[RMDB]
RNA sequence: GGGAACGACUCGAGUAGAGUCGAAAAUAAAGCCUUAUUCACCAAGCAAUUGUGGAAACACUCUUGUGGCCAGGUUAAUAGCCUCGGGUAUGGUAACAGUAGUAAGGAUAAAUGUGAAAAAUGGGUUAUCCGCAGCCAAAUCCUAAGGGGAAAAAGAGUGAUAGAGGAUCUUCGGAUCCUCUAUCACAAAAGAAACAACAACAACAAC
Reactivity to 2A3 in 0.01 (KOAc 150mM, MgCl2 10mM, bicine 150mM(pH8.5), 24C), signal-to-noise 1, nucleotides 027 to 156: u160a020a040a020g020c000c000u020u040a020u030u080c020a050c030c130a160a000g010c000a000a030u000u030g010u000g000g030a020a000a000c010a000c000u000c030u000u020g000u090g070g030c040c000a000g010g010u060u060a000a080u040a210g020c010c000u020c110g000g020g000u040a160u180g010g030u020a070a000c000a040g130u190a000g000u010a030a080g020g010a000u110a020a100a040u130g060u060g080a000a040a060a090a120u210g030g100g000u040u030a030u180c060c070g000c020a030g030c010c010a060a170a000u020c010c000u120a050a140g090g030g000g040a000a090a030a060a000g130a000